[RMDB]
Overview
Chemical mapping of a 207-nucleotide RNA with 2A3 and DMS. 2A3 adducts were read by reverse transcription with SuperScript II with manganese. DMS adducts were read by reverse transcription with MarathonRT. It was measured as part of the RMDB library M2RFPK.
RNA sequence: GGGAACGACUCGAGUAGAGUCGAAAACAUAGCGUUUCACAAUGUGCGCCAUUAACAUUGUGUAUGCAAGCACGUUUCGCAAUGUACGGCGCAGAAACAUUGCCAACACAAAUACGCUUCACGAUGUAAAACAUCGGUGCGUUCGCGCACCGAUGAAGUUAUCUGUCCAGUUCGCUGGACAGAUAACAAAAGAAACAACAACAACAAC
Reactivity to 2A3 in 0.01 (KOAc 150mM, MgCl2 10mM, bicine 150mM(pH8.5), 24C), signal-to-noise 6, nucleotides 027 to 156: c050a050u130a030g010c010g010u010u120u140c110a040c010a030a030u030g020u020g010c010g000c010c010a090u180u180a050a010c000a000u000u000g020u010g080u110a030u080g020c080a070a100g130c100a040c180g010u030u050u030c010g010c010a000a000u000g000u000a020c050g000g000c000g040c010a000g050a010a060a000c010a000u010u010g020c040c060a140a030c040a050c040a140a110a050u130a030c010g020c000u070u130c100a090c150g110a090u120g030u300a010a060a050a060c000a000u000c000g000g000u000g000c020g010u040u050c170g030c000g000c050a000c030c010g000a000u000g010a010a010
Reactivity to DMS in 0.01 (KOAc 150mM, MgCl2 10mM, bicine 150mM(pH8.5), 24C), signal-to-noise 1, nucleotides 027 to 156: c050a100u010a080g000c000g100u000u010u000c060a060c000a090a050u010g030u020g020c010g010c010c010a110u010u000a120a040c030a060u000u000g020u000g050u010a010u010g010c050a060a110g070c100a160c110g000u010u000u000c020g020c020a050a080u000g020u000a070c100g000g010c010g030c020a070g000a180a140a150c020a000u010u000g020c000c020a050a090c050a050c020a090a070a100u000a110c010g010c000u010u000c020a070c090g000a170u000g020u000a030a050a110a240c000a000u000c020g000g000u000g000c000g030u000u000c260g020c000g000c000a010c000c000g020a000u000g000a020a060